[RMDB]
This 207-nucleotide RNA was probed chemically with 2A3 and DMS. Values cover nucleotides 27 to 156.
RNA sequence: GGGAACGACUCGAGUAGAGUCGAAAACUCGCGAACCCAUCGAGGCGUGGGGAGCGACAUGAAUCAGCCUCGAUUAGAUGUGGUCGACGGUACUGCGGCGUACAGCGACCUAGUUAGAAGCCGCAAAACCGGAAGAGAUGACGCUCGACGGACGUCACAUUAUCAUCCGAUUCGUCGGAUGAUAAUGAAAAGAAACAACAACAACAAC
Reactivity to 2A3 in 0.01 (KOAc 150mM, MgCl2 10mM, bicine 150mM(pH8.5), 24C), signal-to-noise 7, nucleotides 027 to 156: c010u010c000g020c010g030a150a130c000c000c010a020u030c070g020a010g010g010c030g010u040g000g010g010g000a020g020c020g050a060c060a130u300g110a120a100u150c070a050g000c000c000u010c020g000a050u100u170a090g100a100u120g110u110g040g030u020c020g030a040c010g010g000u020a030c030u030g000c000g000g000c010g010u060a030c030a010g010c000g050a180c030c030u010a010g000u010u000a040g010a100a010g000c000c000g000c000a050a000a010a030c020c000g030g020a070a030g040a020g010a040u060g020a010c020g020c080u030c050g090a070c060g050g010a020c010g020u000c010a000
Reactivity to DMS in 0.01 (KOAc 150mM, MgCl2 10mM, bicine 150mM(pH8.5), 24C), signal-to-noise 5, nucleotides 027 to 156: c070u000c030g030c010g010a100a300c020c000c040a230u010c030g010a030g090g090c040g030u010g010g010g010g000a230g000c030g010a200c120a120u010g020a080a100u020c120a120g020c010c010u000c010g010a130u000u000a090g010a120u010g040u000g030g030u000c020g030a070c030g020g020u000a100c130u010g030c020g020g020c030g020u010a110c080a140g020c010g010a070c060c070u020a090g020u000u000a130g000a120a190g000c020c010g020c020a070a020a120a030c020c030g010g020a130a110g000a150g020a150u010g000a010c010g020c010u000c010g000a120c060g010g010a070c010g000u010c010a120
Source: RMDB library OK3TST, as collected in RNAgym. The reactions ran in a buffer of 150 mM KOAc, 10 mM MgCl2 and 150 mM bicine (pH 8.5), at 24 C. For 2A3, 8,243 sequencing reads were counted.